[RMDB]
RNA sequence: GGGAACGACUCGAGUAGAGUCGAAAAAUAAACAAAACUCACUCAAUUGCCUUGCAAUAGUUCGAAAGCAAGUCCAGUCCACUCCGAGCCACUUGGAUCUUGGAGCAGUUUGCAAGUCGAAUGUCAACUAUUGCUAUAUCUUCGGAUAUAGCAAUAGAAAAGAAACAACAACAACAAC
Reactivity to 2A3 in 0.01 (KOAc 150mM, MgCl2 10mM, bicine 150mM(pH8.5), 24C), signal-to-noise 4, nucleotides 027 to 126: a000u040a020a050a010c040a040a100a020a010c030u050c070a050c020u120c040a060a160u080u040g020c000c020u010u070g000c010a030a020u010a060g080u040u030c040g060a110a020a010g040c020a030a020g030u020c020c020a020g040u000c030c010a060c030u010c020c030g040a020g050c030c010a100c080u070u090g030g000a080u090c010u020u030g010g000a020g020c010a030g030u050u050u020g010c030a060a050g040u030c010g040a050a030u100g080u110c020a030a040
Reactivity to DMS in 0.01 (KOAc 150mM, MgCl2 10mM, bicine 150mM(pH8.5), 24C), signal-to-noise 6, nucleotides 027 to 126: a090u030a080a070a130c080a080a060a100a100c070u000c050a100c080u010c050a090a080u010u000g000c100c020u000u010g000c020a050a040u000a130g000u000u000c040g000a050a080a160g020c080a030a050g010u010c040c020a060g000u000c060c060a110c100u010c060c040g010a080g010c090c070a110c120u000u000g010g000a040u010c010u000u000g010g010a020g020c040a060g010u010u000u000g000c010a030a050g010u000c030g000a040a060u000g010u010c110a090a170